[RMDB]
This 207-nucleotide RNA was probed chemically with 2A3. The RNA was probed in 150 mM KOAc, 10 mM MgCl2 and 150 mM bicine (pH 8.5) at 24 C.
RNA sequence: GGGAACGACUCGAGUAGAGUCGAAAACUUUGCUCAGAAGGAUGAUGCAGCUGUCAAAGACUUCGAUUUUUAUCGUUAUAACAGACCAACUAUGCUGGAUAUAUGCCAAGCACGUGUCACAUACAAAAUUGUCUCACGCUAUUUUGAUUGCUAUGAGCGUCCUUUAACCGUUCGCGGUUAAAGGACGAAAAGAAACAACAACAACAAC
Reactivity to 2A3 in 0.01 (KOAc 150mM, MgCl2 10mM, bicine 150mM(pH8.5), 24C), signal-to-noise 2, nucleotides 027 to 156: c030u100u010u060g000c020u020c030a070g030a120a070g110g010a050u040g000a020u100g060c030a020g010c030u090g020u070c030a000a030a090g030a060c010u100u020c100g050a070u130u080u150u150u190a050u060c020g000u100u030a060u020a160a130c090a000g040a010c030c030a030a060c000u090a040u130g010c000u000g030g020a040u090a030u020a000u200g040c000c030a030a020g000c000a040c080g050u110g030u060c020a010c030a040u100a010c050a050a080a090a150u130u090g030u000c020u010c060a030c070g000c020u020a070u060u140u040u060g070a070u020u110g000c030u050a040u060g020a010g020